[RMDB]
RNA sequence: GGGAACGACUCGAGUAGAGUCGAAAAAGCGCAGAAGACAGGCCUCAAUCCGCCGCAUAUUGCGAGAAUCUUCAACAAAUUGAUGACCCGUCUCAAGCUCAUUAAAUACUUUGUUCACGGCGGUGACGUCCCCCAUACCAUUCGUGGUAUGGGGGACAAAAGAAACAACAACAACAAC
Reactivity to DMS in 0.01 (KOAc 150mM, MgCl2 10mM, bicine 150mM(pH8.5), 24C), signal-to-noise 1, nucleotides 027 to 126: a060g030c080g000c090a100g020a110a150g020a120c060a010g000g010c030c050u000c090a050a170u000c000c060g080c020c000g000c090a090u040a050u020u000g010c030g010a120g000a100a090u000c120u010u000c060a050a060c090a070a110a110u000u010g000a040u010g010a060c010c000c070g000u010c010u000c060a020a110g000c050u000c020a110u020u000a040a090a060u000a050c130u000u050u000g000u000u000c110a050c030g010g000c030g040g020u000g000a110c030
Reactivity to 2A3 in 0.01 (KOAc 150mM, MgCl2 10mM, bicine 150mM(pH8.5), 24C), signal-to-noise 1, nucleotides 027 to 126: a000g040c060g000c080a030g010a300a010g020a000c050a030g000g030c000c000u020c020a020a000u050c000c010g000c050c000g000c060a090u190a040u260u260g020c020g030a040g030a020a020u000c030u270u170c090a060a090c010a080a090a050u050u040g070a020u040g100a200c000c000c000g000u000c000u000c020a080a040g010c000u000c020a080u000u180a050a000a050u140a050c100u120u150u100g030u050u100c000a010c060g010g080c050g060g040u030g000a020c060